[RMDB]
RNA sequence: GGGAACGACUCGAGUAGAGUCGAAAAAAUGCCGGAAGUGAAUGCCCUGCAUUCUACCUACAGAAAAUCUUUGUCCACUAUCUCAGGCGGAAUUGCUUGCUUUCCUGAGAGUGAUGGAUGGCAAGUGCAGCUUGCCGCAAUUCGUUGCGGCAAGCUGAAAAGAAACAACAACAACAAC
Reactivity to 2A3 in 0.01 (KOAc 150mM, MgCl2 10mM, bicine 150mM(pH8.5), 24C), signal-to-noise 1, nucleotides 027 to 126: a000a000u020g000c010c020g070g000a090a040g060u120g230a130a020u160g020c000c020c080u020g040c020a030u000u060c010u090a180c040c010u050a050c030a060g150a050a110a020a000u020c030u080u120u120g050u070c010c000a020c000u000a030u130c010u020c000a020g060g000c050g130g000a150a130u210u220g050c050u140u110g060c000u020u070u070c010c000u010g010a060g000a000g030u030g050a140u030g000g020a020u020g000g000c010a000a060g030u010g040
Reactivity to DMS in 0.01 (KOAc 150mM, MgCl2 10mM, bicine 150mM(pH8.5), 24C), signal-to-noise 2, nucleotides 027 to 126: a050a040u020g020c020c060g000g000a070a110g000u020g000a130a080u020g020c120c130c050u020g040c010a020u000u000c050u000a170c000c020u020a170c270a090g000a080a030a070a120u030c110u000u000u010g010u010c000c000a030c050u000a180u000c060u000c060a040g020g040c300g000g000a050a030u010u010g000c190u000u000g000c060u000u000u000c000c000u000g000a080g000a140g000u000g020a050u010g000g020a020u000g000g000c100a010a020g040u000g000